[RMDB]
RNA sequence: GGGAACGACUCGAGUAGAGUCGAAAAUGGCUUCCGAUUCCGCUGCGUUCGAUCGCCCGCCUGACCGCUAGCUGAUACCGGCCGGGGUGUCCGGCUUAUUGCUUGGCGUGCGUGCGUCCUGGGCGUCGUUUUCACUGAGGUUCGCCUCAGUGAAAACAAAAGAAACAACAACAACAAC
Reactivity to DMS in 0.01 (KOAc 150mM, MgCl2 10mM, bicine 150mM(pH8.5), 24C), signal-to-noise 2, nucleotides 027 to 126: u060g020g010c090u000u030c030c010g000a150u010u040c030c000g060c030u000g010c070g000u000u000c080g010a110u030c030g010c030c020c020g050c000c070u010g000a150c040c040g000c020u000a040g010c010u000g020a030u000a060c240c130g010g000c010c000g010g000g000g030u050g000u050c020c020g010g000c050u020u010a030u010u030g000c010u020u000g000g030c010g020u000g000c030g040u020g010c070g010u020c020c040u030g010g000g030c030g000u030c090
Reactivity to 2A3 in 0.01 (KOAc 150mM, MgCl2 10mM, bicine 150mM(pH8.5), 24C), signal-to-noise 3, nucleotides 027 to 126: u110g080g010c010u050u010c040c000g060a060u130u000c010c020g020c040u030g030c020g060u040u080c030g040a140u050c020g000c010c020c000g030c040c010u170g090a240c020c010g000c040u030a010g000c040u050g030a020u010a090c030c000g030g000c010c030g000g020g000g060u170g090u030c000c010g010g000c000u010u080a130u050u050g020c020u020u080g030g020c020g040u050g010c030g020u070g030c020g030u080c000c030u050g000g000g030c000g020u020c030